[RMDB]
RNA sequence: GGGAACGACUCGAGUAGAGUCGAAAAGAUAUGGAUCUCAGCCUGGGAGCACCAGAUCGGAAACGAUCUGAAGUGCGAGGAUCAGGGAGAUCCUAAGUCAAACGCCAGCACGUUCGCGUGCUGGCGACGAGAGUUAACAGUUCGCUGUUAACUCUCGAAAAGAAACAACAACAACAAC
Reactivity to DMS in 0.01 (KOAc 150mM, MgCl2 10mM, bicine 150mM(pH8.5), 24C), signal-to-noise 2, nucleotides 027 to 126: g000a010u000a000u010g010g000a020u000c000u010c000a170g010c000c000u000g010g000g020a030g020c000a010c020c000a020g000a010u000c000g010g000a010a010a020c000g010a020u000c010u000g010a080a110g030u000g010c000g010a070g020g000a020u000c000a010g000g010g010a020g010a020u000c000c000u010a000a080g000u010c010a140a110a230c050g000c000c000a010g010c000a000c000g000u000u000c250g030c010g060u000g010c000u000g020g010c010g010a010
Reactivity to 2A3 in 0.01 (KOAc 150mM, MgCl2 10mM, bicine 150mM(pH8.5), 24C), signal-to-noise 4, nucleotides 027 to 126: g010a010u020a000u060g000g010a010u000c000u010c040a230g150c030c000u000g020g010g010a030g010c010a000c020c000a010g000a010u000c000g000g000a010a000a000c010g010a000u030c010u020g050a300a100g010u000g010c010g060a170g080g030a020u000c000a010g020g010g010a010g000a000u010c000c000u000a000a000g000u020c030a210a000a040c040g030c020c000a000g000c010a020c000g100u190u200c300g020c000g180u000g000c000u000g000g050c010g010a000
This 177-nucleotide RNA was probed chemically with DMS and 2A3. It was measured as part of the RMDB library TTRDES. The 2A3 profile rests on 11,443 reads.